[RMDB]
Notes
An RNA of 177 nucleotides, treated with DMS and read out base by base. Source: RMDB library OK2TST, as collected in RNAgym. The DMS profile rests on 1,047 reads. DMS adducts were read by reverse transcription with MarathonRT.

RNA sequence: GGGAACGACUCGAGUAGAGUCGAAAAGUCCCUGGGGACAGUGAGGCACCACGCAGGGUGGCAGCUCCUUUUGACACCCCGUGCACAGGGAGGUCUGCAUGCAGGACGGCUGGUGUUCCCCCGGCACUGCACACGAUUGGUUCGCCAAUCGUGUGCAAAAAGAAACAACAACAACAAC
Reactivity to DMS in 0.01 (KOAc 150mM, MgCl2 10mM, bicine 150mM(pH8.5), 24C), signal-to-noise 1, nucleotides 027 to 126: g000u000c020c000c000u010g000g040g000g000a150c160a050g020u000g000a170g020g020c000a060c070c020a030c070g030c070a140g020g010g010u010g010g020c020a010g000c070u010c080c020u000u000u000u000g000a130c000a120c080c130c060c150g030u020g020c000a080c080a080g020g000g010a050g000g010u020c030u000g000c000a030u010g010c060a070g000g050a170c140g000g000c000u000g010g000u010g000u010u000c010c000c020c020c020g010g000c100a110c090